[RMDB]
RNA sequence: GGGAACGACUCGAGUAGAGUCGAAAAAGUUUAAUAUCUGAUACGUCCUCUAUCAGAGGACAAUAUAUUAAAUGGAUUUUUGGAAUUAGGAGUUGGAAUAGGAGCUUGCUCCGUCCACUCCACGCAUCUUACGAAGGCUGUUCGCAGCCUUCGUAAGAAAAGAAACAACAACAACAAC
Reactivity to 2A3 in 0.01 (KOAc 150mM, MgCl2 10mM, bicine 150mM(pH8.5), 24C), signal-to-noise 2, nucleotides 027 to 126: a010g010u000u000u000a010a020u000a000u000c160u080g130a090u020a290c170g000u000c000c000u000c030u080a210u230c140a050g000a010g000g000a000c000a000a000u010a000u000a000u000u000a000a000a000u050g060g090a080u080u030u080u090u120g140g150a070a070u090u050a140g000g000a000g030u140u050g040g000a070a160u130a280g000g000a000g000c020u040u080g020c000u050c000c000g000u000c000c000a000c000u000c000c000a000c030g040c010a020u000